[RMDB]
RNA sequence: GGGAACGACUCGAGUAGAGUCGAAAAUGAUUAUCUCCGGCGGUGAAAACAUUUACUGCGCCGAGCUGGAAAACGUUCUGGCCAGCCAUCCCGACAUCGCCGAAGUCGCGGUCAUCGGCCGGGCCGAUAGCUGACCUUAGUUCGCUAAGGUCAGCUAAAAAGAAACAACAACAACAAC
Reactivity to DMS in 0.01 (KOAc 150mM, MgCl2 10mM, bicine 150mM(pH8.5), 24C), signal-to-noise 1, nucleotides 027 to 126: u000g020a110u000u040a060u000c050u010c020c010g000g000c000g010g000u000g000a070a000a190a270c030a010u000u000u000a300c020u000g000c140g060c080c010g000a040g050c000u030g030g050a150a020a050a300c280g020u000u030c010u040g080g010c000c000a030g010c180c130a060u000c000c000c000g000a120c060a040u000c010g000c030c000g000a160a040g000u000c160g040c020g050g000u030c080a040u000c170g020g020c000c140g000g000g000c000c050g030a120
Reactivity to 2A3 in 0.01 (KOAc 150mM, MgCl2 10mM, bicine 150mM(pH8.5), 24C), signal-to-noise 2, nucleotides 027 to 126: u070g020a040u070u270a180u180c120u030c060c000g000g000c000g000g010u060g050a040a070a070a030c020a000u040u060u030a090c070u030g020c010g020c100c000g010a000g000c000u000g060g030a030a100a020a010c040g020u000u010c010u210g030g000c000c000a000g020c040c060a090u010c000c000c030g020a050c000a000u020c010g000c020c000g010a020a010g050u080c050g010c040g100g010u010c050a140u150c110g030g030c000c030g060g000g010c000c040g070a050